[RMDB]
The record gives the reactivity of an RNA of 207 nucleotides to 2A3.
RNA sequence: GGGAACGACUCGAGUAGAGUCGAAAACCAGAUGACGGUCCUGCCAUGAGACCGCAACGAGAGCAUGUCGCAUCGAAUGGACUCGGGGAGUCGGCAGCUUGCCCCACGGAUGAGCGCCUACUGCCGGAAGAGACGUGCAACUUCGGUUGCACGUCAAGAGACUCAUUGUGUUCGCACAAUGAGUCUCAAAAGAAACAACAACAACAAC
Reactivity to 2A3 in 0.01 (KOAc 150mM, MgCl2 10mM, bicine 150mM(pH8.5), 24C), signal-to-noise 2, nucleotides 027 to 156: c020c000a030g120a120u140g060a060c030g020g010u000c010c060u060g170c090c000a140u160g010a070g000a130c030c010g000c070a030a010c090g110a000g000a030g080c090a090u120g010u130c000g010c010a010u040c090g090a100a070u060g010g030a020c050u020c080g040g000g000g000a040g050u040c080g010g000c010a080g000c010u080u140g020c010c010c010c070a090c120g030g000a200u090g010a030g020c020g050c010c020u020a030c000u030g100c000c000g000g020a070a020g060a000g010a000c000g000u010g000c000a000a000c010u000u050c180g050g010u000u000g000c000a000c000g000u000c000a000a000
Conditions: 150 mM KOAc, 10 mM MgCl2 and 150 mM bicine (pH 8.5), 24 C. Source: RMDB library M2RFPK, as collected in RNAgym.